Structure probing data (2A3 and DMS) for a 177-nucleotide construct. For 2A3 the reverse transcriptase was SuperScript II with manganese. DMS adducts were read by reverse transcription with MarathonRT. The 2A3 profile rests on 2,032 reads. Source: RMDB library OK2TRN, as collected in RNAgym. For DMS, 14,619 sequencing reads were counted.
RNA sequence: GGGAACGACUCGAGUAGAGUCGAAAACAUGAAUGGGGUUGCUGUUAAUUAUUGUCGAUGCAUAAUCACAUCCUGGUCUGGGGUUGAGGUGAGAUCGCUCUUGUAGUAUUGCAUUAUUUUCAGGCUGAUAUAGAGAUGAGUUCGCUCAUCUCUAUAUAAAAGAAACAACAACAACAAC
Reactivity to 2A3 in 0.01 (KOAc 150mM, MgCl2 10mM, bicine 150mM(pH8.5), 24C), signal-to-noise 2, nucleotides 027 to 126: c030a050u170g130a180a060u140g040g030g060g000u070u070g000c000u010g020u060u040a050a010u180u120a110u100u110g060u040c060g010a020u030g000c030a050u070a150a020u070c030a000c010a060u060c010c050u040g010g010u050c030u040g030g050g000g000u000u060g040a040g000g000u030g020a030g010a030u030c070g000c020u000c010u030u080g050u040a040g000u020a100u070u170g000c020a020u050u080a080u060u190u060u090c020a010g060g000c040u030g060
Reactivity to DMS in 0.01 (KOAc 150mM, MgCl2 10mM, bicine 150mM(pH8.5), 24C), signal-to-noise 6, nucleotides 027 to 126: c070a080u010g010a090a090u010g010g000g010g010u000u000g010c020u000g000u000u000a070a100u000u000a090u000u000g020u000c110g000a070u010g000c110a060u010a070a090u010c070a070c070a060u000c050c040u000g010g010u000c050u010g010g000g010g010u000u000g010a060g010g010u010g000a080g010a050u000c100g010c040u010c040u010u000g010u000a060g010u000a070u010u010g010c060a060u000u000a100u000u000u010u000c050a070g010g010c080u000g000